[RMDB]
RNA sequence: GGGAACGACUCGAGUAGAGUCGAAAAGAUAUGGAUAAGAUUGUUUUCAUUUAGCCACACUAGGCUUUGUGUCGGAAACGACACAUGGCCAUGUGGCUAAAUGAAAUGAAGAUCUUAUCCUAAGUCAGCUUAGAUAAGACUUCGGUCUUAUCUAAGCAAAAGAAACAACAACAACAAC
Reactivity to DMS in 0.01 (KOAc 150mM, MgCl2 10mM, bicine 150mM(pH8.5), 24C), signal-to-noise 3, nucleotides 027 to 126: g030a050u000a300u010g010g010a010u000a000a000g010a020u000u000g000u000u000u000u000c000a010u000u010u000a000g010c000c000a010c010a040c300u000a220g010g010c000u010u000u000g030u010g020u020c000g000g000a100a170a240c000g010a020c000a010c000a000u000g000g020c010c010a150u000g000u000g000g000c010u000a000a010a000u000g000a000a000a010u010g020a130a290g000a000u000c000u000u000a000u000c000c010u000a020a090g000u000c070a150
Reactivity to 2A3 in 0.01 (KOAc 150mM, MgCl2 10mM, bicine 150mM(pH8.5), 24C), signal-to-noise 1, nucleotides 027 to 126: g060a030u130a040u230g000g000a000u020a000a020g000a000u010u080g130u260u120u010u010c010a000u010u010u020a010g000c000c000a010c040a060c160u300a190g000g000c000u020u010u000g000u000g000u020c010g040g050a150a090a050c030g010a000c000a000c000a000u010g010g000c000c000a000u000g000u000g000g000c010u000a000a000a000u000g000a000a000a000u010g000a010a040g020a000u030c010u000u010a010u000c000c000u000a070a010g100u030c060a020
The data come from the RNA Mapping Database (RMDB), library TTRINS. This 177-nucleotide RNA was probed chemically with DMS and 2A3. Reactivities are given for positions 27 through 126. The reactions ran in a buffer of 150 mM KOAc, 10 mM MgCl2 and 150 mM bicine (pH 8.5), at 24 C. Reactivities are rounded to 0.1 and cut off at 0 and 3. The 2A3 profile rests on 6,658 reads. For DMS the reverse transcriptase was MarathonRT.